RNA sequence: GGGAACGACUCGAGUAGAGUCGAAAAAUUGUGCGGUCUCUGAGAGAGGAGAACCUGUCUGAGAGAGCUUACCGCUUUUCAUAGUGGCUCUCUGAGUGACUCUGAGGCUCCUCUCGUUCCCAACCAACUAGCUAAGAGGUUUCGACCUCUUAGCUAGAAAAGAAACAACAACAACAAC
Reactivity to 2A3 in 0.01 (KOAc 150mM, MgCl2 10mM, bicine 150mM(pH8.5), 24C), signal-to-noise 2, nucleotides 027 to 126: a000u120u140g030u040g060c020g050g050u030c020u030c040u160g070a090g000a000g000a020g050g020a070g030a120a210c000c020u050g030u060c010u130g020a010g020a000g000a010g030c080u100u110a080c050c010g020c060u070u110u080u080c120a150u130a090g050u040g020g020c010u010c000u000c000u030g020a030g100u060g020a030c010u000c110u220g100a030g080g000c000u000c000c000u040c000u000c010g000u000u010c000c000c000a000a000c000c000a050a050
Reactivity to DMS in 0.01 (KOAc 150mM, MgCl2 10mM, bicine 150mM(pH8.5), 24C), signal-to-noise 2, nucleotides 027 to 126: a060u010u010g010u000g020c080g000g020u000c080u000c080u000g020a230g000a030g010a010g000g000a020g010a060a100c010c050u000g010u010c010u000g000a030g010a030g000a030g000c090u010u030a040c090c110g010c100u000u000u010u000c240a100u010a040g020u000g000g020c000u000c000u000c000u000g010a110g000u000g020a000c040u010c160u010g000a100g010g000c010u000c000c000u000c010u000c000g010u000u010c010c000c000a100a110c190c130a040a260
Structure probing data (2A3 and DMS) for a 177-nucleotide construct. For DMS, 1,378 sequencing reads were counted. For DMS the reverse transcriptase was MarathonRT. It was measured as part of the RMDB library M2PK90. For 2A3, 1,113 sequencing reads were counted. The RNA was probed in 150 mM KOAc, 10 mM MgCl2 and 150 mM bicine (pH 8.5) at 24 C. For 2A3 the reverse transcriptase was SuperScript II with manganese.